[RMDB]
RNA sequence: GGGAACGACUCGAGUAGAGUCGAAAAGGCAACCGGCUGGUGCCGAACGUCGCUCGACACGGGGGUGGCCCGGCCACCCUUUGCGCACCUUGGCACCGACCAUGAGACGUCGUGUGUGCCGAACGCCCUAUUACCUUCACUUCGGUGAAGGUAAUAGAAAAGAAACAACAACAACAAC
Reactivity to 2A3 in 0.01 (KOAc 150mM, MgCl2 10mM, bicine 150mM(pH8.5), 24C), signal-to-noise 3, nucleotides 027 to 126: g010g000c010a010a020c030c000g020g000c060u090g000g000u000g000c010c010g010a050a020c030g030u050c030g020c050u090c090g140a090c030a070c210g020g000g000g000g000u000g020g000c020c160c060g070g010c010c010a020c010c010c000u010u040u020g000c000g000c020a000c010c000u020u030g000g000c000a010c010c000g020a030c050c020a100u200g090a020g010a120c090g020u010c010g000u030g010u040g040u030g250c010c000g000a030a010c040g090c000c000
Reactivity to DMS in 0.01 (KOAc 150mM, MgCl2 10mM, bicine 150mM(pH8.5), 24C), signal-to-noise 4, nucleotides 027 to 126: g000g000c020a150a090c070c060g010g020c010u000g010g020u000g010c000c000g000a010a020c200g010u000c090g040c010u000c120g030a220c130a030c210g020g000g000g010g030u000g000g010c030c180c200g010g000c000c000a020c010c000c000u000u000u000g010c000g020c050a050c030c060u000u000g000g010c000a020c010c020g010a090c030c070a090u010g010a110g000a160c210g000u000c030g010u000g000u020g000u010g010c000c000g010a110a120c170g000c010c010

Conditions: 150 mM KOAc, 10 mM MgCl2 and 150 mM bicine (pH 8.5), 24 C. The record gives the reactivity of an RNA of 177 nucleotides to 2A3 and DMS. For 2A3, 4,817 sequencing reads were counted.